[RMDB]
The record gives the reactivity of an RNA of 177 nucleotides to DMS and 2A3.
RNA sequence: GGGAACGACUCGAGUAGAGUCGAAAAGUGCAAGAGCAGAUACUUAAGUCGAAGAGCAUCUUUCUAUCUUCUCUUCCAAUCUAUUGAUCUGCCCUUCCAAUACUAUCAGAUCAAUAGAUUGGAAGAGCCUAAAAAUCCUGUUCGCAGGAUUUUUAGGAAAAGAAACAACAACAACAAC
Reactivity to DMS in 0.01 (KOAc 150mM, MgCl2 10mM, bicine 150mM(pH8.5), 24C), signal-to-noise 3, nucleotides 027 to 126: g010u000g000c100a060a060g020a080g020c070a090g010a120u000a040c090u010u010a070a100g020u000c100g000a090a110g010a080g010c040a050u000c050u000u000u000c050u020a090u010c100u000u000c010u000c010u010u000c010c000a020a010u010c010u010a010u000u000g000a010u000c010u010g000c090c030c020u010u010c090c090a060a070u010a060c100u000a070u000c020a020g010a010u010c010a010a010u000a000g000a000u000u000g010g000a000a000g000a010g000
Reactivity to 2A3 in 0.01 (KOAc 150mM, MgCl2 10mM, bicine 150mM(pH8.5), 24C), signal-to-noise 2, nucleotides 027 to 126: g060u050g030c030a060a000g020a010g110c070a000g020a060u060a100c040u170u230a160a030g030u060c030g040a050a000g020a020g090c000a040u010c030u000u110u010c040u050a180u030c020u110u000c000u010c010u010u010c000c010a000a010u020c000u000a010u010u010g000a000u000c000u010g010c000c000c000u140u110c040c020a040a060u150a130c050u090a110u240c010a000g010a000u020c000a010a000u000a000g010a000u000u000g000g000a000a000g000a000g010

Record summary
Conditions: 150 mM KOAc, 10 mM MgCl2 and 150 mM bicine (pH 8.5), 24 C. For DMS, 2,369 sequencing reads were counted.